[RMDB]
RNA sequence: GGGAACGACUCGAGUAGAGUCGAAAAUCUAAAUCUACUGCAGGUACUGCCGAAACUGCUGAAACUGCAGCCACUGCACCAACCGCAGGCACUGCUGGUACUGCAGACACAACGUCUGCUCAAAAUGCCCUUGUCACAAGUUCGCUUGUGACAAGGGAAAAGAAACAACAACAACAAC
Reactivity to DMS in 0.01 (KOAc 150mM, MgCl2 10mM, bicine 150mM(pH8.5), 24C), signal-to-noise 1, nucleotides 027 to 126: u010c090u000a010a090a130u010c080u000a120c060u010g000c000a050g010g000u000a010c120u000g000c040c060g060a150a050a050c130u000g010c000u000g050a060a150a050c200u010g000c000a010g010c030c150a190c000u000g000c020a020c060c050a070a080c170c060g020c010a010g020g080c140a060c030u000g010c000u000g000g000u000a060c170u010g050c000a000g010a050c060a050c190a070a100c120g000u000c000u000g000c000u020c120a050a010a070a140u030g000